[RMDB]
RNA sequence: GGGAACGACUCGAGUAGAGUCGAAAAGAUCUGCGCCGAUCCGAAACGCUAGCAAACAGCCCGCAUCAUGUCGUCUCCUAACUUCGACGUGGUGAAGUACUGAGCUUAUGCGAGUAAGCCUGUUAGCAAUAGAUCAGAACGUUCGCGUUCUGAUCAAACUAUGGGGUUUGUUCGCAAACCCCAUAGUAAAAGAAACAACAACAACAAC
Reactivity to DMS in 0.01 (KOAc 150mM, MgCl2 10mM, bicine 150mM(pH8.5), 24C), signal-to-noise 2, nucleotides 027 to 156: g000a080u010c020u000g010c070g030c050c050g000a120u010c020c020g040a110a110a060c050g090c030u000a030g040c000a040a120a140c030a220g040c080c020c040g000c020a040u000c010a040u000g010u000c010g000u000c110u020c170c100u000a090a050c070u000u000c010g020a050c020g070u010g000g040u000g010a050a070g020u000a100c040u010g020a190g000c010u010u000a060u000g030c210g000a200g010u000a040a020g000c000c040u000g030u000u000a060g020c000a070a150u000a090g000a020u000c010a010g000a000a000c000g010u000u000c300g070c020g040u000u010c000u000g010a020u000c000a010a050
Reactivity to 2A3 in 0.01 (KOAc 150mM, MgCl2 10mM, bicine 150mM(pH8.5), 24C), signal-to-noise 3, nucleotides 027 to 156: g000a070u030c030u070g040c070g020c060c020g030a050u040c060c010g040a050a060a020c070g000c020u030a010g030c030a060a040a140c030a020g050c000c010c000g050c020a010u010c000a000u010g000u010c010g020u010c030u110c070c090u090a110a130c060u060u050c020g000a000c010g020u000g000g000u000g020a040a010g000u030a070c030u030g030a030g000c000u000u040a010u070g060c030g020a030g050u020a010a020g000c020c040u070g000u060u040a010g020c020a090a110u040a120g000a000u010c000a000g010a010a000c000g020u030u050c180g020c000g100u000u000c040u000g020a000u000c000a000a010